[RMDB]
RNA sequence: GGGAACGACUCGAGUAGAGUCGAAAAGCGUAUCAGCGUCAGUCUCAAGCCCGAUAUGGAGAAUGUUCCGGUACUGGUUGUUGAGGAUGACGGUGUUGGCUGGCAACGGAAAGCGGGCGAUGACAAACCACUGAUAUGAUUUCGAUCAUAUCAGUGGAAAAGAAACAACAACAACAAC
Reactivity to DMS in 0.01 (KOAc 150mM, MgCl2 10mM, bicine 150mM(pH8.5), 24C), signal-to-noise 7, nucleotides 027 to 126: g010c040g010u000a070u010c040a040g010c020g010u000c020a030g000u000c010u000c020a070a100g010c080c000c060g010a100u000a100u010g020g010a040g010a130a130u010g020u010u000c010c000g010g030u010a110c080u000g000g010u000u000g020u010u000g000a040g000g000a050u000g010a040c030g000g010u000g020u000u000g010g000c020u000g000g000c060a060a080c080g010g000a030a070a110g020c040g000g000g010c040g000a070u010g010a080c130a070a100a200
Reactivity to 2A3 in 0.01 (KOAc 150mM, MgCl2 10mM, bicine 150mM(pH8.5), 24C), signal-to-noise 6, nucleotides 027 to 126: g020c010g040u130a040u170c040a020g080c010g030u020c010a020g050u000c010u010c020a030a030g010c000c000c000g050a090u070a080u300g060g020a050g040a150a290u210g070u120u020c010c000g030g030u080a080c040u040g050g050u090u090g130u090u030g030a010g020g020a030u020g010a020c020g000g070u030g030u040u070g050g000c020u020g020g000c020a070a030c020g030g030a090a040a000g030c030g010g020g010c020g040a070u100g020a020c050a020a060a020